Background
Chemical mapping of a 177-nucleotide RNA with DMS and 2A3. The RNA was probed in 150 mM KOAc, 10 mM MgCl2 and 150 mM bicine (pH 8.5) at 24 C. The 2A3 profile rests on 2,758 reads. The DMS profile rests on 9,228 reads.
[RMDB]
RNA sequence: GGGAACGACUCGAGUAGAGUCGAAAAUGUGUGCUCGAGAGCCUCCCUGUCCGACAGAGCUUUUAGAUCUUCUGAUCUUUCCCUGGAGGUUAUCGCUUAUGCUUCAAGCGAUUCUCGGAAUAAUUAAUCAAUGCAUUGAUUUCGAUCAAUGCAUUGAAAAAGAAACAACAACAACAAC
Reactivity to DMS in 0.01 (KOAc 150mM, MgCl2 10mM, bicine 150mM(pH8.5), 24C), signal-to-noise 5, nucleotides 027 to 126: u010g010u010g020u010g010c030u000c020g010a110g010a120g000c010c010u000c010c010c110u010g010u000c020c020g000a090c100a070g010a060g000c050u000u000u000u000a020g000a020u000c010u000u010c290u010g010a020u000c000u000u000u000c000c000c000u000g010g000a040g010g000u000u010a020u000c010g010c000u000u000a080u000g020c200u000u000c100a030a010g000c000g000a020u000u010c030u000c000g010g000a080a110u010a070a100u010u010a080a160
Reactivity to 2A3 in 0.01 (KOAc 150mM, MgCl2 10mM, bicine 150mM(pH8.5), 24C), signal-to-noise 2, nucleotides 027 to 126: u160g080u000g040u060g040c020u030c050g130a110g000a020g040c010c000u000c030c000c060u050g090u000c020c010g000a000c010a040g090a010g020c000u040u010u010u040a020g000a030u000c030u270u040c130u300g000a000u000c000u000u010u000c000c000c030u000g090g000a010g020g000u080u060a010u020c000g040c020u000u010a060u230g130c050u110u110c080a000a000g020c000g020a020u000u000c010u010c010g040g050a150a090u240a150a040u170u150a000a060